[RMDB]
RNA sequence: GGGAACGACUCGAGUAGAGUCGAAAAGUAUCAUUAGGGAUGUAAAUCCUGAUGAUAAGUGCUUUGCUAAUAAGCACCGGUCCUUCACACAAUGGUAUCAUGAGCAUGUUGGUGGUGUCUAUGACAAAUGCGUAGAGCUUCGGCUCUACGAAAAGAAACAACAACAACAAC
Reactivity to DMS in 0.01 (KOAc 150mM, MgCl2 10mM, bicine 150mM(pH8.5), 24C), signal-to-noise 4, nucleotides 027 to 129: g050u040a030u020c020a010u010u010a080g010g010g000a060u040g050u030a130a130a080u040c010c020u000g000a000u000g030a000u030a000a000g020u010g000c020u000u000u050g030c120u050a180a080u040a050a010g000c010a000c020c110g040g040u020c000c000u000u000c050a100c120a050c120a030a060u000g010g040u020a000u030c050a070u020g000a070g000c000a120u040g030u100u020g000g000u020g030g010u020g010u020c040u000a100u040g000a120c120a050a130a040u000g010
Reactivity to 2A3 in 0.01 (KOAc 150mM, MgCl2 10mM, bicine 150mM(pH8.5), 24C), signal-to-noise 6, nucleotides 027 to 129: g060u020a000u000c000a000u010u070a060g060g000g050a040u070g080u300a070a090a110u010c000c000u000g010a000u000g000a010u000a050a040g010u020g020c000u070u020u060g040c040u100a140a060u160a130a090g000c000a000c000c010g020g030u010c000c040u090u150c050a080c010a020c000a070a090u100g030g010u100a030u090c030a000u030g070a020g080c050a070u080g030u130u090g090g010u010g000g000u020g040u020c030u060a110u080g030a070c030a030a120a030u190g050